[RMDB]
RNA sequence: GGGAACGACUCGAGUAGAGUCGAAAAAGCGGCCAAAGGGAGCAGACUGUAAAUCUGCCGUCAUCGACUUCGAAGGUUCGAUUCGAGCGCAGCGAGAAAGCGUUGCCGUAGGCAACGACCCGAAGGGAACGGGCAUAAUCUUCGGAUUAUGCCCGUUAAAAGAAACAACAACAACAAC
Reactivity to 2A3 in 0.01 (KOAc 150mM, MgCl2 10mM, bicine 150mM(pH8.5), 24C), signal-to-noise 2, nucleotides 027 to 126: a000g090c010g000g030c040c000a140a070a080g000g040g030a050g050c020a000g060a070c000u040g130u250a010a000a210u010c000u000g000c000c000g080u070c020a030u010c000g030a040c060u070u010c080g060a090a050g140g080u160u040c040g020a070u000u040c020g030a040g000c030g000c010a000g010c020g040a080g070a040a070a000g120c000g040u000u000g000c000c020g190u090a040g000g000c010a010a020c000g030a020c040c000c000g040a050a020g050g000g000
Reactivity to DMS in 0.01 (KOAc 150mM, MgCl2 10mM, bicine 150mM(pH8.5), 24C), signal-to-noise 2, nucleotides 027 to 126: a060g000c060g030g000c010c080a060a100a150g060g000g000a180g010c010a030g000a040c060u000g060u030a040a170a180u010c000u000g030c030c020g050u030c030a120u030c000g000a060c130u000u030c090g020a060a130g010g020u060u030c060g000a060u000u030c000g000a060g000c080g010c080a000g040c020g010a130g010a100a040a110g000c020g000u000u000g000c000c000g030u020a070g030g050c000a000a000c020g010a120c000c000c000g000a100a120g000g000g000
Source: RMDB library RFM100, as collected in RNAgym.
An RNA of 177 nucleotides, treated with 2A3 and DMS and read out base by base.
Conditions: 150 mM KOAc, 10 mM MgCl2 and 150 mM bicine (pH 8.5), 24 C.